[RMDB]
RNA sequence: GGGAACGACUCGAGUAGAGUCGAAAAGAUAUGGAACCUAAUACGCGCAAGCGUUGAAAUCGGAAACGAUGGAGCUUGCGACCCGUGAUAGGUUCCUAAGUCAAACAACGCGCUUCGGCGCGUUGAAGAUUACUAUGGGCUUCGGCCCAUAGUAAUCAAAAGAAACAACAACAACAAC
Reactivity to 2A3 in 0.01 (KOAc 150mM, MgCl2 10mM, bicine 150mM(pH8.5), 24C), signal-to-noise 1, nucleotides 027 to 126: g000a010u070a020u190g000g000a010a010c000c000u030a080a030u070a110c050g040c000g000c070a020a020g020c020g180u190u030g010a020a040a010u010c010g000g030a040a000a050c020g000a000u010g050g010a010g000c010u020u000g010c000g000a020c020c010c020g020u010g030a100u030a000g000g000u000u040c010c000u000a020a010g040u000c030a030a100a120c000a000a000c020g040c010g080c100u040u150c270g130g070c000g000c000g000u000u000g000a000a000
Reactivity to DMS in 0.01 (KOAc 150mM, MgCl2 10mM, bicine 150mM(pH8.5), 24C), signal-to-noise 2, nucleotides 027 to 126: g000a030u010a300u010g000g000a060a010c000c000u000a020a080u000a010c020g010c000g020c000a020a010g000c000g040u020u030g000a060a210a020u010c010g010g020a180a090a150c010g010a020u000g000g020a150g000c000u000u010g000c010g040a060c180c250c110g010u000g000a060u000a030g000g000u000u000c000c000u000a010a050g020u010c020a140a130a200c030a000a020c010g000c000g020c000u000u000c180g010g000c010g060c000g010u000u000g010a060a110